[RMDB]
RNA sequence: GGGAACGACUCGAGUAGAGUCGAAAACAGAACCAUGUUUGUUCAAAUCUUCGGUCCGCAAGGAGAGAAGCUCUUUGGCAAACACCUUCCUUUCAACUGGGGUGCGCUGAAAAGUUCACUUCCGGGACCUAAACAGUUAGUUCGCUAACUGUUUAGGAAAAGAAACAACAACAACAAC
Reactivity to 2A3 in 0.01 (KOAc 150mM, MgCl2 10mM, bicine 150mM(pH8.5), 24C), signal-to-noise 9, nucleotides 027 to 126: c060a030g110a060a030c050c030a060u060g020u000u010u010g080u180u240c020a050a040a300u300c030u050u000c050g240g090u020c010c000g020c070a060a050g000g000a040g000a000g000a020a000g000c000u000c000u000u000u000g000g000c000a000a000a000c000a010c000c010u070u090c010c010u070u160u130c100a160a110c030u010g000g000g000g000u000g000c020g000c010u010g020a030a040a030a020g010u010u010c000a000c000u300u050c060c000g000g000g020a010
Reactivity to DMS in 0.01 (KOAc 150mM, MgCl2 10mM, bicine 150mM(pH8.5), 24C), signal-to-noise 5, nucleotides 027 to 126: c190a110g020a120a140c120c170a160u010g000u010u000u010g010u020u030c010a010a030a010u020c010u000u000c010g000g000u000c000c010g020c300a110a170g000g010a020g010a300g000a030a010g000c010u000c000u000u000u000g000g000c000a010a030a020c010a030c150c090u010u020c040c030u010u010u010c100a100a130c040u000g000g000g000g000u000g010c070g000c000u000g000a060a050a110a010g000u000u000c010a030c000u000u000c000c010g000g000g010a250